[RMDB]
RNA sequence: GGGAACGACUCGAGUAGAGUCGAAAACUAUUGUGGCUCUGAUUUUAUUGACAUUGUCAGGCGGUUAGCAGUAUCACUGUUCCAGCCUAUUACUUAUUUCCAAUUGACUACCUCAUUGGUCUUGGGUGUGGGAAUGGCUUCGGCCAUUCCAAAAGAAACAACAACAACAAC
Reactivity to DMS in 0.01 (KOAc 150mM, MgCl2 10mM, bicine 150mM(pH8.5), 24C), signal-to-noise 4, nucleotides 027 to 129: c000u050a040u010u000g030u030g020g040c030u030c020u020g050a060u010u040u010u050a090u040u060g040a080c150a130u060u060g000u000c020a070g030g030c260g010g000u030u000a020g030c060a000g030u030a060u070c140a140c070u000g010u030u040c000c000a110g090c080c000u040a010u020u050a000c010u030u050a080u020u010u030c030c010a090a190u010u040g020a100c120u040a050c160c150u030c070a120u000u000g020g000u010c040u000u060g000g000g020u040g000u020g010
Reactivity to 2A3 in 0.01 (KOAc 150mM, MgCl2 10mM, bicine 150mM(pH8.5), 24C), signal-to-noise 5, nucleotides 027 to 129: c010u020a030u100u120g020u010g030g020c000u010c010u030g110a110u040u040u030u110a120u070u130g030a050c080a100u100u060g000u060c000a000g000g030c010g040g000u020u070a030g000c010a010g000u050a050u280c050a020c060u010g030u000u040c010c010a030g020c000c010u040a080u100u080a070c030u050u080a050u070u120u000c000c010a020a040u070u130g030a030c020u050a090c040c030u080c010a110u000u030g020g000u000c000u000u050g010g000g000u100g010u060g060